[RMDB]
This 207-nucleotide RNA was probed chemically with DMS and 2A3. High 2A3 reactivity points to a flexible backbone, as in loops and unpaired stretches. For 2A3, 5,184 sequencing reads were counted. The RNA was probed in 150 mM KOAc, 10 mM MgCl2 and 150 mM bicine (pH 8.5) at 24 C.
RNA sequence: GGGAACGACUCGAGUAGAGUCGAAAAUGGCGUUCGCGCCACCUUCGGAUAUGGACGCUUUUGACGCUCGAAGAGUCGUUGAAACAAUAUCGGAAACGAUAUUGUGGAGACUCUAGAGCGAUAAGCGUCCUAAGUCAAUUAUGCCUUUCGAGGCAAAUUACUGAUUCUUUUUCGAAAGAAUCAGUAAAAAAGAAACAACAACAACAAC
Reactivity to DMS in 0.01 (KOAc 150mM, MgCl2 10mM, bicine 150mM(pH8.5), 24C), signal-to-noise 3, nucleotides 027 to 156: u010g010g050c010g030u010u000c230g050c060g000c010c010a030c040c080u020u000c060g020g000a160u010a240u020g000g010a020c010g030c020u010u000u010u000g020a240c130g030c000u000c010g000a170a230g000a030g000u000c010g050u000u000g000a300a210a020c000a010a010u000a000u000c000g010g010a220a100a290c010g040a020u000a000u000u000g000u000g010g010a240g010a000c000u000c010u000a300g010a030g020c000g000a060u000a000a030g000c010g000u000c000c010u000a000a040g000u000c030a110a170u000u010a170u000g000c000c010u010u000u000c190g030a030g030g030c030a010a000a090
Reactivity to 2A3 in 0.01 (KOAc 150mM, MgCl2 10mM, bicine 150mM(pH8.5), 24C), signal-to-noise 4, nucleotides 027 to 156: u050g000g010c020g010u060u060c270g020c010g050c130c000a060c010c010u160u270c140g120g000a040u030a080u140g010g000a000c000g000c010u000u050u070u170g210a120c010g010c000u010c000g070a200a100g000a020g000u000c010g010u060u010g000a000a000a000c000a000a000u000a000u000c010g020g050a080a060a050c010g000a000u000a000u010u020g000u000g000g010a040g010a000c000u000c010u010a030g000a000g000c000g000a000u000a000a000g000c010g010u000c000c000u000a000a000g000u000c000a000a040u200u110a080u220g010c000c000u120u120u120c250g120a010g000g000c000a050a020a010